RNA sequence: GGGAACGACUCGAGUAGAGUCGAAAAAUCAAGUCAUUGUCUUAAAAGACAAUGUACUUUCUUCUAUGCUUAGAUUGCACACCGUUGAGUCAGGUGAUAUUAACGUUGUUGCAGCUUCCGGAUCUUUAAACUAUUUGGUUCGCCAAAUAGAAAAGAAACAACAACAACAAC
Reactivity to DMS in 0.01 (KOAc 150mM, MgCl2 10mM, bicine 150mM(pH8.5), 24C), signal-to-noise 4, nucleotides 027 to 129: a000u000c170a060a020g010u010c020a060u000u030g010u030c000u010u070a100a120a140a080g030a020c010a020a080u040g030u070a000c020u000u030u060c080u000u000c050u050a100u040g020c020u000u000a090g010a120u020u010g000c070a100c000a070c100c030g050u020u010g020a000g050u030c040a150g000g060u000g000a080u040a100u070u050a070a080c070g030u000u000g040u050u020g030c030a050g020c050u070u000c060c070g030g020a110u020c030u000u000u000a080a070a080
Reactivity to 2A3 in 0.01 (KOAc 150mM, MgCl2 10mM, bicine 150mM(pH8.5), 24C), signal-to-noise 4, nucleotides 027 to 129: a000u100c000a000a000g000u000c000a000u000u000g010u000c020u060u300a110a150a030a000g000a000c000a010a000u010g000u050a000c000u020u010u020c020u060u030c030u060a110u210g090c030u110u160a080g050a120u150u110g010c000a000c010a030c090c000g000u000u010g030a030g100u040c060a090g030g160u190g150a030u090a060u100u040a070a000c060g000u000u000g180u080u070g030c000a020g020c010u080u000c040c010g030g010a010u000c030u000u050u070a080a120a040

An RNA of 170 nucleotides, treated with DMS and 2A3 and read out base by base.